Chemical mapping of a 207-nucleotide RNA with 2A3. The reactions ran in a buffer of 150 mM KOAc, 10 mM MgCl2 and 150 mM bicine (pH 8.5), at 24 C.
[RMDB]
RNA sequence: GGGAACGACUCGAGUAGAGUCGAAAAAAGUGUUUUUAGUGGCUGCGUAGUGUUCCAUCACUGCCUGAUCUCAAAUCUACUUAACCACUUGAAAAUUUGUGGGCAUUUAGGAAUAAAUGACUUUAAAACAUGACUCUCAGCUGGGCGCGGUGGCUCAAUGAUUCCAUGCAUUCGUGCAUGGAAUCAUAAAAGAAACAACAACAACAAC
Reactivity to 2A3 in 0.01 (KOAc 150mM, MgCl2 10mM, bicine 150mM(pH8.5), 24C), signal-to-noise 1, nucleotides 027 to 156: a000a000g110u090g000u000u030u030u030u050a020g000u030g050g000c040u020g030c050g000u000a000g020u040g020u220u000c240c170a050u190c000a000c010u030g000c010c010u120g140a300u030c060u020c050a000a120a120u010c030u010a050c000u020u060a140a040c000c010a050c010u070u090g150a060a150a060a150u070u140u280g030u070g010g020g050c000a000u050u020u060a080g010g080a050a070u040a100a220a020u050g050a040c040u070u090u080a030a150a000a000c020a050u090g060a090c000u000c000u010c050a040g020c020u020g010g010g010c070g000c040g130g040u010g050g010c000u000c070a010